[RMDB]
RNA sequence: GGGAACGACUCGAGUAGAGUCGAAAAGAAAGAAAGAAAGCCUUGCUUUGACUCACUCAACCUGGGUGUGAUGUUAUUUAUAAUAUGGUAUCCAUCACAACCUCCUUGAGUGAGCGAUAGCAGGAAAGUGGUCGUGAUAUUUCGAUAUCACGACCACAAAAGAAACAACAACAACAAC
Reactivity to DMS in 0.01 (KOAc 150mM, MgCl2 10mM, bicine 150mM(pH8.5), 24C), signal-to-noise 1, nucleotides 027 to 126: g000a060a090a220g040a220a010a060g000a130a110a150g000c010c000u000u000g000c000u000u000u000g130a160c000u030c000a000c010u030c000a000a040c190c300u000g000g000g000u000g120u000g000a000u000g000u000u000a060u000u000u000a000u000a280a150u010a120u010g000g000u000a000u070c300c000a000u000c000a000c000a000a000c000c000u030c280c300u000u000g000a000g000u000g000a000g000c100g000a130u000a070g010c010a000g010g010a000a000a000
Reactivity to 2A3 in 0.01 (KOAc 150mM, MgCl2 10mM, bicine 150mM(pH8.5), 24C), signal-to-noise 3, nucleotides 027 to 126: g090a000a000a010g110a140a100a000g080a070a060a030g070c000c030u050u110g000c040u000u050u080g020a260c030u020c000a010c000u000c000a010a010c050c100u190g030g000g040u000g010u000g030a000u000g020u010u000a110u080u070u110a200u060a130a280u170a100u210g060g000u060a050u050c020c000a000u000c000a000c040a090a260c040c000u030c010c000u000u000g000a000g010u030g000a000g000c010g000a000u050a010g010c000a000g050g000a000a000a020
This 177-nucleotide RNA was probed chemically with DMS and 2A3. 2A3 adducts were read by reverse transcription with SuperScript II with manganese. Reactivities are given for positions 27 through 126. For DMS, 708 sequencing reads were counted. It was measured as part of the RMDB library RFM100. The reactions ran in a buffer of 150 mM KOAc, 10 mM MgCl2 and 150 mM bicine (pH 8.5), at 24 C.